RNA sequence: GGGAACGACUCGAGUAGAGUCGAAAAGAGGUGUGGCAGUGUCGUCUGGCAGGUUGCGCCUUGAAGCGCUGGGCUGAGUGGACAAGUACAGGCACGAUUUGUACGCGUGUCCAGAUGAUCAGCCAUGGCGAGAUUCAACGUUCGCGUUGGAUUUCGCAAAAGAAACAACAACAACAAC
Reactivity to 2A3 in 0.01 (KOAc 150mM, MgCl2 10mM, bicine 150mM(pH8.5), 24C), signal-to-noise 2, nucleotides 027 to 126: g050a000g000g000u010g000u020g010g000c080a300g280u000g000u110c120g110u050c240u300g000g000c000a010g000g030u020u030g000c000g020c020c000u010u050g020a020a010g030c060g000c060u090g010g000g030c010u010g000a030g050u020g000g010a000c000a020a070g000u010a010c010a000g000g070c080a020c260g070a180u000u000u050g020u020a010c010g040c090g120u030g000u000c000c000a010g030a300u300g030a120u000c010a000g000c000c000a010u130g080
Source: RMDB library OK1LIB, as collected in RNAgym.
This 177-nucleotide RNA was probed chemically with 2A3.
For 2A3, 2,610 sequencing reads were counted.